[RMDB]
RNA sequence: GGGAACGACUCGAGUAGAGUCGAAAAGAUAUGGAACCGAAGAACGCUCUUACAUCGAUCAGAGCUCGGAAACGAGCUCUGGGAGUAAUAGCGGGAGGUUCCUAAGUCAAAGUUGGCUUCGGCCAACCAAGGCUCAAAGGUUCGCCUUUGAGCCUUGAAAAGAAACAACAACAACAAC
Reactivity to DMS in 0.01 (KOAc 150mM, MgCl2 10mM, bicine 150mM(pH8.5), 24C), signal-to-noise 2, nucleotides 027 to 126: g010a060u000a300u000g000g010a020a030c000c000g000a110a180g000a190a220c020g000c000u000c060u000u000a000c010a200u000c150g000a120u000c010a000g010a000g000c000u000c000g010g000a050a140a170c000g010a020g000c000u000c000u000g000g000g010a050g010u000a000a030u010a010g030c020g000g000g010a130g010g000u000u000c000c000u000a020a040g010u000c040a060a120a070g000u000u000g000g010c000u000u020c160g030g030c000c000a000a000c000
Reactivity to 2A3 in 0.01 (KOAc 150mM, MgCl2 10mM, bicine 150mM(pH8.5), 24C), signal-to-noise 1, nucleotides 027 to 126: g030a000u130a060u230g010g010a000a000c020c000g100a150a060g040a050a020c010g000c010u020c000u020u020a010c070a300u160c110g180a080u160c050a030g000a000g000c010u000c000g010g050a030a120a040c000g000a000g040c000u050c000u030g000g010g010a010g050u040a000a020u020a000g000c030g030g000g030a020g000g000u010u000c000c000u040a170a000g020u050c090a110a080a040g000u020u020g000g000c030u050u100c300g120g000c000c020a000a000c020